[RMDB]
RNA sequence: GGGAACGACUCGAGUAGAGUCGAAAACCAGCGAGAGGCGUAGGAGAGAGGGCCGCGGUGCUCUGGAGUAGAGGCUUCUUGCUUCGAAACACCAUCGAUCGUCCCUUCUUCUUUUACCUUCUCCUGGCUCUUCGAGUGAGACGCGACCGGUGGCAUCGCACUAGCUAAACUUCGGUUUAGCUAGUGCAAAAGAAACAACAACAACAAC
Reactivity to 2A3 in 0.01 (KOAc 150mM, MgCl2 10mM, bicine 150mM(pH8.5), 24C), signal-to-noise 1, nucleotides 027 to 156: c000c000a000g000c220g050a010g000a000g020g020c110g050u030a000g000g000a020g010a000g000a010g010g010g030c000c000g040c000g010g000u000g010c000u010c000u030g010g000a000g000u010a000g000a010g000g020c000u130u100c110u300u300g020c000u000u000c010g000a010a010a010c010a030c150c010a000u000c000g100a300u020c000g000u050c010c000c000u010u020c030u060u040c000u000u040u010u020a000c000c000u010u010c000u000c010c000u000g000g000c050u030c000u070u070c030g050a030g020u080g030a100g020a050c030g050c030g060a060c000c040g000g050u020g030g030c010a030u110c070

Notes: This 207-nucleotide RNA was probed chemically with 2A3. 2A3 adducts were read by reverse transcription with SuperScript II with manganese. Reactivities are given for positions 27 through 156. As a SHAPE reagent, 2A3 marks flexible, mostly unpaired nucleotides at the ribose 2'-OH. The data come from the RNA Mapping Database (RMDB), library VIROID.